[RMDB]
RNA sequence: GGGAACGACUCGAGUAGAGUCGAAAAUCCUAAGUCUCGGUGACAUGUAUCCCGAACAACUUGGAUUUAGGGUCGGAAACGACCCUUGUCAGUUGGGAGGGAUACAACAGCACCGAGAUAUGGAAAAGAUGACUCUAAGUUCGCUUAGAGUCAUCAAUCUUUGUCCUUUGUUCGCAAAGGACAAAGAAAAAGAAACAACAACAACAAC
Reactivity to 2A3 in 0.01 (KOAc 150mM, MgCl2 10mM, bicine 150mM(pH8.5), 24C), signal-to-noise 2, nucleotides 027 to 156: u000c010c000u040a190a030g020u000c000u000c000g040g010u000g020a120c020a050u020g000u000a010u000c000c000c000g010a070a000c000a000a000c000u090u170g150g030a050u300u170u130a010g000g000g000u000c010g060g030a070a030a080c040g010a000c000c000c020u000u000g010u000c000a000g020u010u000g020g000g010a040g000g030g000a000u000a000c000a000a000c010a000g000c000a000c000c010g000a000g000a000u000a010u020g010g030a000a070a100a100g010a000u000g000a000c000u010c000u000a000a020g040u050u110c160g100c200u010u000a000g000a000g000u000c000a010u000c000a000a000
Reactivity to DMS in 0.01 (KOAc 150mM, MgCl2 10mM, bicine 150mM(pH8.5), 24C), signal-to-noise 1, nucleotides 027 to 156: u010c000c000u000a000a150g000u000c000u000c000g000g030u000g000a090c070a300u010g000u020a020u000c030c000c000g000a300a300c000a030a000c000u000u010g030g000a100u010u040u000a050g000g050g000u000c000g010g000a240a080a200c000g030a000c000c010c000u010u000g000u000c000a030g020u000u000g000g000g000a300g040g000g010a000u000a000c000a000a060c000a060g000c000a050c010c000g010a010g000a000u000a010u000g020g000a110a070a170a190g000a080u000g000a010c000u000c000u000a000a000g010u000u000c300g020c000u020u000a020g000a000g020u000c000a000u000c000a020a080